[RMDB]
RNA sequence: GGGAACGACUCGAGUAGAGUCGAAAAAGACGGAUCCGACGGUGAGGGACGAAAGCUCGGGUCACGAACCGGAUUAGAUACCCGGGUAGUCCGAGCUGUAAACGAUGUCUGCUAGGUGUGGCACAGGCCACCUCAGUAUGUUCGCAUACUGAGGUGGAAAAGAAACAACAACAACAAC
Reactivity to 2A3 in 0.01 (KOAc 150mM, MgCl2 10mM, bicine 150mM(pH8.5), 24C), signal-to-noise 1, nucleotides 027 to 126: a000g050a010c010g050g010a020u030c020c030g000a000c030g080g020u050g020a050g000g000g040a020c020g040a130a020a000g000c000u000c000g000g000g010u100c100a010c040g010a030a010c010c010g010g020a000u020u060a090g080a070u130a080c030c000c030g000g000g030u070a020g000u000c000c000g000a020g000c000u000g030u020a010a030a000c020g020a020u100g030u060c010u030g020c040u020a050g010g070u040g020u030g050g000c020a010c020a060g040g070
Reactivity to DMS in 0.01 (KOAc 150mM, MgCl2 10mM, bicine 150mM(pH8.5), 24C), signal-to-noise 2, nucleotides 027 to 126: a140g010a080c040g000g000a070u000c030c030g010a090c120g000g010u010g010a110g000g010g020a090c100g010a120a110a030g010c000u000c010g000g000g010u000c230a050c060g010a170a300c020c000g010g000a040u010u000a090g000a140u010a090c150c000c000g000g000g000u000a170g010u000c020c010g010a010g010c000u000g000u010a020a110a110c120g010a060u010g010u000c020u010g000c080u000a070g000g000u010g020u000g020g000c070a070c150a070g000g000
Structure probing data (2A3 and DMS) for a 177-nucleotide construct.
For DMS the reverse transcriptase was MarathonRT.
Conditions: 150 mM KOAc, 10 mM MgCl2 and 150 mM bicine (pH 8.5), 24 C.